[RMDB]
RNA sequence: GGGAACGACUCGAGUAGAGUCGAAAAGUUGAUCAUUGGCUUGGGUUUGCAGCUCUUGAUAAUGAGGGUUGUGCAUUUCCGGUUCAUUAAUUCUAGUAGUCUCUACAACACGACCAGCCGGGUGGUGUCAACCCGAGUUAUUCGUAACUCGGGUUGAAAAAGAAACAACAACAACAAC
Reactivity to 2A3 in 0.01 (KOAc 150mM, MgCl2 10mM, bicine 150mM(pH8.5), 24C), signal-to-noise 1, nucleotides 027 to 126: g010u030u070g040a090u110c040a090u010u060g050g000c010u000u130g060g000g030u050u050u040g150c050a030g080c000u010c030u140u010g080a170u150a300a050u300g040a000g010g030g030u110u070g090u070g080c010a040u000u070u060c010c000g030g010u140u010c050a050u050u180a120a130u130u000c030u000a030g010u020a000g000u080c030u000c000u140a060c010a060a030c000a020c050g030a070c010c070a040g050c140c070g070g000g010u070g030g010u000g020
Reactivity to DMS in 0.01 (KOAc 150mM, MgCl2 10mM, bicine 150mM(pH8.5), 24C), signal-to-noise 2, nucleotides 027 to 126: g020u000u010g010a060u010c080a070u000u000g010g010c020u000u000g030g010g010u010u000u000g020c040a090g000c000u010c040u010u000g000a120u030a100a140u000g010a060g010g010g030u000u000g030u000g000c060a030u000u000u000c030c020g000g010u000u020c040a040u000u000a040a090u000u000c060u010a090g030u000a080g000u000c010u000c040u000a080c040a100a140c140a050c060g000a070c040c040a090g010c080c090g010g010g000u000g010g010u000g000